This 177-nucleotide RNA was probed chemically with DMS and 2A3. Conditions: 150 mM KOAc, 10 mM MgCl2 and 150 mM bicine (pH 8.5), 24 C. In probing experiments dimethyl sulfate is read out at A N1 and C N3, which are open when not base-paired.
RNA sequence: GGGAACGACUCGAGUAGAGUCGAAAAAUCGAUAUCACCCGGUUCUGGUUCGAGCAGGGCAGUCUGAGCAAUGAGCGCAAGGUCGCCGAGGGCCUGAAGUACCAGGUCGAGACCCGCGCGAUCCAGGAAGAUCUCCAUUAUUCGUAAUGGAGAUCUUAAAAGAAACAACAACAACAAC
Reactivity to DMS in 0.01 (KOAc 150mM, MgCl2 10mM, bicine 150mM(pH8.5), 24C), signal-to-noise 9, nucleotides 027 to 126: a080u010c110g000a100u000a090u010c080a140c020c020c020g010g020u010u000c020u000g000g010u000u000c040g010a060g010c030a080g020g010g010c080a080g010u000c020u000g000a200g010c070a110a090u010g010a190g010c030g010c060a130a120g010g020u000c020g020c080c110g000a130g010g000g000c000c010u000g000a080a140g010u010a130c230c020a020g010g010u000c010g000a110g000a080c030c010c050g010c020g000c010g000a020u000c010c030a050g000g010
Reactivity to 2A3 in 0.01 (KOAc 150mM, MgCl2 10mM, bicine 150mM(pH8.5), 24C), signal-to-noise 4, nucleotides 027 to 126: a010u040c020g030a000u060a060u210c080a150c020c010c000g000g040u080u050c030u040g040g000u020u050c020g010a040g020c080a220g020g050g000c020a010g060u010c020u070g040a020g050c040a090a180u190g030a120g060c020g010c050a070a140g060g000u100c000g000c080c050g060a140g010g000g030c010c000u010g020a080a000g040u060a080c080c020a000g000g000u010c010g010a050g030a120c020c020c000g000c000g000c010g030a010u000c010c010a010g040g010